[RMDB]
RNA sequence: GGGAACGACUCGAGUAGAGUCGAAAAAAAAGAUAUGGAUCGUUGAACUACUCUGUGAGUGGGACGUUUGACGUUUAUCGGAAACGAUAAACCGAGUCCGCACAGAGCAACGAUCCUAAGUCAAAAAUCCCCUUCUAUACUUCGGUAUAGAAGGGGAAAAAGAAACAACAACAACAAC
Reactivity to DMS in 0.01 (KOAc 150mM, MgCl2 10mM, bicine 150mM(pH8.5), 24C), signal-to-noise 1, nucleotides 027 to 126: a010a110a050a160g000a030u000a270u000g000g010a010u000c010g020u010u000g010a060a020c050u000a300c030u000c000u000g000u000g000a070g040u000g020g010g000a010c020g020u000u020u010g080a270c300g000u000u000u000a000u010c000g000g000a030a040a170c000g000a050u000a010a000a020c020c030g000a030g000u000c000c030g000c010a000c000a040g000a040g000c000a000a000c000g000a000u010c000c000u000a000a050g000u020c020a040a070a060a160a140